[RMDB]
RNA sequence: GGGAACGACUCGAGUAGAGUCGAAAAUGAAAAACAAUUCAUGUUAUACAGAUCAUAUAACUUGCUGACAUCUGUUCUCUUAAGAAAGUGGAAAGAAGAGACAAAUCUCUAUUGUUUGUUAUUUGUCUAUGCAUUCAUGCCCUGCCUUACUCCACAAUGAUUAGCUAUCCUUCGGGAUAGCUAAUCAAAAAGAAACAACAACAACAAC
Reactivity to 2A3 in 0.01 (KOAc 150mM, MgCl2 10mM, bicine 150mM(pH8.5), 24C), signal-to-noise 2, nucleotides 027 to 156: u030g020a030a020a030a040a000c070a050a070u110u130c050a040u070g010u050u120a140u020a070c080a050g150a140u100c090a030u050a010u020a100a070c030u070u090g050c050u030g090a060c000a060u010c010u030g000u090u000c050u000c000u060u050a070a040g050a120a100a010g080u010g010g040a030a050a040g060a050a000g030a010g000a020c000a010a010a000u010c040u010c020u050a090u080u130g010u030u010u100g010u030u020a010u010u030u000g000u000c010u020a070u200g000c050a060u060u200c010a040u110g050c010c020c010u030g060c010c010u020u030a080c020u000c000c050a010c010a040a080
Reactivity to DMS in 0.01 (KOAc 150mM, MgCl2 10mM, bicine 150mM(pH8.5), 24C), signal-to-noise 1, nucleotides 027 to 156: u010g000a080a060a040a080a080c060a000a060u000u010c030a110u020g010u010u000a010u010a040c010a120g030a140u000c070a300u010a040u000a050a050c020u000u000g040c020u030g010a110c040a070u000c030u050g010u010u000c020u010c030u000u010a070a170g030a030a040a200g020u000g000g020a080a070a150g000a110a080g010a050g010a160c010a030a050a010u010c020u000c090u000a080u010u000g010u010u000u000g010u000u000a120u010u000u000g000u000c040u020a110u000g000c040a120u000u030c070a030u000g000c000c110c010u000g000c020c010u000u010a040c060u010c010c020a050c050a070a180